[RMDB]
RNA sequence: GGGAACGACUCGAGUAGAGUCGAAAAGUUUAGCAGCCAGCCUCAAGCUAGGCUUAGUUGAUGGGAUGAUAAUGGACCAGCAGUCAUCAGAGGCAUGCAUAGACAUGAUAAAAAGGGAGAAGAACAACAAGAACGAGUCUUUCGAGACUCGUUCUUGAAAAGAAACAACAACAACAAC
Reactivity to DMS in 0.01 (KOAc 150mM, MgCl2 10mM, bicine 150mM(pH8.5), 24C), signal-to-noise 2, nucleotides 027 to 126: g010u000u000u010a150g000c010a120g020c010c070a090g060c030c070u000c050a290a160g060c050u000a030g010g010c090u020u000a080g030u000u000g000a070u000g010g040g020a060u010g000a060u000a090a110u010g010g000a030c070c050a050g060c060a080g000u010c010a060u000c060a130g010a090g000g000c000a070u010g040c020a110u010a080g020a140c020a030u030g000a060u020a060a030a010a110a100g000g010g020a110g010a130a060g030a070a090c080a070a160